RNA sequence: GGGAACGACUCGAGUAGAGUCGAAAAAAAUCGGUAUUUUUGCUGGCGGGAUGCUGGCCAUUCUAACGCCGACGAGCGGCCUGCCUUCAAGGCCUUUCAUCGACUUUUUCCUUAAGACGCCGCCUCCACUGAGUUCUCAAUUCGUUGAGAACUCAGUAAAAGAAACAACAACAACAAC
Reactivity to DMS in 0.01 (KOAc 150mM, MgCl2 10mM, bicine 150mM(pH8.5), 24C), signal-to-noise 2, nucleotides 027 to 126: a040a040a020u020c050g000g000u030a010u000u010u000u000u030g000c010u010g010g020c020g010g000g000a080u010g010c000u010g010g010c060c100a020u030u000c040u010a050a140c130g010c030c000g050a080c100g000a120g010c100g000g000c010c000u000g010c040c050u020u030c070a080a060g000g000c010c000u000u000u010c020a040u000c020g000a100c080u030u000u010u020u000c020c010u000u000a080a100g010a080c070g000c050c000g000c000c000u000c050c050
Reactivity to 2A3 in 0.01 (KOAc 150mM, MgCl2 10mM, bicine 150mM(pH8.5), 24C), signal-to-noise 5, nucleotides 027 to 126: a000a000a010u100c050g020g010u100a140u060u070u010u070u090g050c040u020g010g000c010g010g120g060a070u200g020c020u020g030g000c020c010a020u110u090c060u110a090a070c090g010c030c000g060a080c040g020a030g030c050g020g000c010c000u010g030c030c020u050u070c070a050a030g010g010c000c000u010u050u040c050a070u010c000g010a040c030u040u040u030u060u070c000c000u020u070a040a010g050a030c040g010c030c010g010c000c020u020c010c010